[RMDB]
RNA sequence: GGGAACGACUCGAGUAGAGUCGAAAAGAUAUGGAUAGAGCUUUUGACGAAGGAGUAUUCGGAAACGAAUACAUACUUCGAUAAGCUUCAUCCUAAGUCAAAAGGAUAGGGGUUCGCCCCUAUCCAACUAUCUGGAAUGGUUCGCCAUUCCAGAUAGAAAAGAAACAACAACAACAAC
Reactivity to DMS in 0.01 (KOAc 150mM, MgCl2 10mM, bicine 150mM(pH8.5), 24C), signal-to-noise 3, nucleotides 027 to 126: g000a040u000a300u010g000g000a000u000a040g000a000g010c010u000u010u010u000g010a190c160g010a010a000g000g020a080g030u000a000u000u000c000g000g000a130a080a180c000g010a010a010u000a000c000a020u010a100c000u000u000c000g020a090u000a010a000g010c000u000u010c050a000u000c000c010u010a090a140g010u000c030a070a070a130a090g000g000a030u000a010g010g000g000g030u000u010c300g000c000c010c000c000u000a010u010c010c000a030a060
Reactivity to 2A3 in 0.01 (KOAc 150mM, MgCl2 10mM, bicine 150mM(pH8.5), 24C), signal-to-noise 3, nucleotides 027 to 126: g010a020u100a020u140g010g010a000u040a140g010a040g020c020u150u130u110u220g220a160c070g000a010a000g020g020a020g000u000a000u000u030c000g010g000a050a060a050c010g000a000a010u000a010c010a010u180a010c000u000u000c010g000a000u000a000a000g000c000u050u020c010a010u020c010c000u020a110a020g020u040c040a080a010a030a170g010g000a000u000a000g000g030g020g010u050u100c270g130c020c020c000c000u000a000u000c000c000a000a000

Source information: This 177-nucleotide RNA was probed chemically with DMS and 2A3. The reactions ran in a buffer of 150 mM KOAc, 10 mM MgCl2 and 150 mM bicine (pH 8.5), at 24 C. The 2A3 profile rests on 5,221 reads. For DMS, 2,968 sequencing reads were counted.